[RMDB]
RNA sequence: GGGAACGACUCGAGUAGAGUCGAAAAGAUAUGGAGGAGCAAUGAUGUUACGUAGUUGAGUCGGAAACGACUCAGGUUCGAAGUAAUUGAGCUCCCUCCUAAGUCAAAAGGUAUGUUCGCAUACCAAGCACAUUACAUGCUUCGGCAUGUAAUGUGCAAAAGAAACAACAACAACAAC
Reactivity to 2A3 in 0.01 (KOAc 150mM, MgCl2 10mM, bicine 150mM(pH8.5), 24C), signal-to-noise 2, nucleotides 027 to 126: g040a020u040a020u150g000g000a010g010g000a030g070c030a050a300u190g050a020u070g060u180u100a060c040g050u070a090g260u070u000g000a000g000u000c030g000g010a020a030a020c000g000a000c000u000c000a010g020g060u040u110c030g060a150a090g030u040a020a040u000u040g000a000g000c000u030c150c040c040u000c000c000u010a040a020g060u020c030a050a150a060a000g000g000u030a010u010g050u040u070c260g000c080a010u010a000c000c000a010a040
Reactivity to DMS in 0.01 (KOAc 150mM, MgCl2 10mM, bicine 150mM(pH8.5), 24C), signal-to-noise 2, nucleotides 027 to 126: g000a060u000a300u000g000g010a030g040g000a000g020c000a110a150u010g010a060u030g010u000u000a040c010g000u000a150g020u010u000g000a020g000u000c010g010g010a090a080a140c010g000a010c000u000c000a000g020g010u000u000c090g020a100a300g010u000a010a010u000u000g000a130g020c000u000c140c060c010u000c020c000u000a060a110g000u020c010a090a030a100a100g000g020u000a020u000g000u000u020c280g010c020a050u000a010c000c000a090a080
The record gives the reactivity of an RNA of 177 nucleotides to 2A3 and DMS. The 2A3 profile rests on 2,552 reads. For 2A3 the reverse transcriptase was SuperScript II with manganese. The RNA was probed in 150 mM KOAc, 10 mM MgCl2 and 150 mM bicine (pH 8.5) at 24 C.